RNA sequence: GGGAACGACUCGAGUAGAGUCGAAAACACAAGAUGAGCGAUUGACGAGCUCGUUCGUUUAACGAAUAGUGUAGGGGAGAGUAAGAAGCCAUCCCAUCAGUUAGUAAGUAGGGUAAGGGCCUACUUAUACUUUAGAACCAUUCGUGGUUCUAAAGUAAAAAGAAACAACAACAACAAC
Reactivity to 2A3 in 0.01 (KOAc 150mM, MgCl2 10mM, bicine 150mM(pH8.5), 24C), signal-to-noise 9, nucleotides 027 to 126: c070a000c030a020a060g060a130u120g000a030g020c030g070a090u060u210g130a110c070g030a030g020c010u010c010g010u010u010c000g000u020u070u190a110a060c040g020a050a040u080a120g050u040g040u090a080g000g020g000g000a060g020a030g060u090a090a050g080a080a010g040c020c010a040u020c000c010c010a070u110c020a040g070u020u140a020g030u030a030a010g000u000a010g010g030g020u050a040a080g060g030g020c000c000u000a000c000u000u000a010
Reactivity to DMS in 0.01 (KOAc 150mM, MgCl2 10mM, bicine 150mM(pH8.5), 24C), signal-to-noise 9, nucleotides 027 to 126: c020a050c090a100a110g010a050u010g010a020g010c020g010a140u020u020g010a110c150g010a200g010c050u000c010g000u010u000c010g010u010u020u030a100a080c050g000a050a040u010a100g010u010g000u010a070g010g000g000g000a060g010a130g010u010a060a090g010a100a130g010c030c040a150u000c010c010c010a090u030c140a080g000u010u010a090g010u010a010a010g010u000a010g000g000g010u020a090a100g020g010g010c000c000u000a010c010u000u000a050